[RMDB]
RNA sequence: GGGAACGACUCGAGUAGAGUCGAAAAUGGCCGGGAGAAGUUCUCUUAAAGAGUGGCCCGCUGGGGAAUACACUACGUGGCUUACCUGUAUGGGGGCAAGGGCUCGAAGAGGGAUCCCCGUGGAAAGCUCGACAAUAUAGUUCGCUAUAUUGUCGAGAAAAGAAACAACAACAACAAC
Reactivity to DMS in 0.01 (KOAc 150mM, MgCl2 10mM, bicine 150mM(pH8.5), 24C), signal-to-noise 1, nucleotides 027 to 126: u000g000g020c090c010g010g000g000a120g000a040a100g000u010u000c000u010c010u000u020a060a120a260g000a060g050u000g010g020c030c000c030g020c010u000g010g020g000g000a050a060u000a080c030a000c030u010a090c220g030u000g010g010c050u000u000a090c020c010u000g020u000a030u030g010g000g030g000g000c030a110a120g000g010g020c010u000c010g000a070a120g000a030g030g010g030a100u000c020c000c000c030g020u000g010g000a120a100a130g010
Reactivity to 2A3 in 0.01 (KOAc 150mM, MgCl2 10mM, bicine 150mM(pH8.5), 24C), signal-to-noise 1, nucleotides 027 to 126: u040g070g000c080c010g000g000g000a230g000a220a160g040u070u000c000u000c000u040u030a260a210a070g000a070g020u080g000g000c010c050c010g240c050u100g000g020g030g000a030a020u070a050c050a010c040u180a100c230g070u040g010g010c050u080u080a070c000c000u000g040u090a200u300g110g000g000g040g010c030a140a150g080g060g020c000u000c040g010a040a000g000a050g030g040g000a000u030c010c000c050c000g030u040g050g110a140a080a000g000
Conditions: 150 mM KOAc, 10 mM MgCl2 and 150 mM bicine (pH 8.5), 24 C. Chemical mapping of a 177-nucleotide RNA with DMS and 2A3. For 2A3 the reverse transcriptase was SuperScript II with manganese. For 2A3, 577 sequencing reads were counted.